The data come from the RNA Mapping Database (RMDB), libraries RFM100 and RFMREP. The record gives the reactivity of an RNA of 177 nucleotides to DMS and 2A3. For DMS the reverse transcriptase was MarathonRT. The 2A3 profile rests on 551 reads. The reactions ran in a buffer of 150 mM KOAc, 10 mM MgCl2 and 150 mM bicine (pH 8.5), at 24 C.
RNA sequence: GGGAACGACUCGAGUAGAGUCGAAAACCGGAGACCGAUAGCGCACAAGUAGAGUGAUCGAAAGGUUAAAAGCACCUUGAAAAGGGAGUUAAAUAGCACGUGAAAUUGUUGAAAGGGAAGCGCUUGCAAUACACUCCACUUUCGAGUGGAGUGUAUUAAAAGAAACAACAACAACAAC
Reactivity to DMS in 0.01 (KOAc 150mM, MgCl2 10mM, bicine 150mM(pH8.5), 24C), signal-to-noise 5, nucleotides 027 to 126: c020c010g030g010a130g020a070c050c040g000a090u030a050g000c040g020c040a080c060a080a070g020u010a070g000a110g010u030g010a070u010c040g000a080a100a090g000g000u000u010a050a100a080a070g010c080a040c010c010u000u030g000a070a080a090a080g010g000g000a060g030u000u000a030a060a090u020a090g000c030a040c090g010u020g020a050a100a140u000u000g010u000u000g000a020a090a110g010g000g030a040a140g010c290g000c030u000u000g010c300
Reactivity to 2A3 in 0.01 (KOAc 150mM, MgCl2 10mM, bicine 150mM(pH8.5), 24C), signal-to-noise 2, nucleotides 027 to 126: c000c010g000g000a050g050a090c010c020g120a130u020a080g040c040g010c000a000c010a150a000g010u070a050g010a020g070u130g050a030u010c020g040a150a010a000g030g020u050u050a000a020a000a150g060c060a020c000c000u000u080g150a060a080a060a010g000g000g000a120g000u000u100a100a090a080u010a060g020c000a000c080g050u080g010a030a090a260u060u040g020u070u000g070a100a060a000g110g000g020a080a000g030c010g000c000u000u010g030c000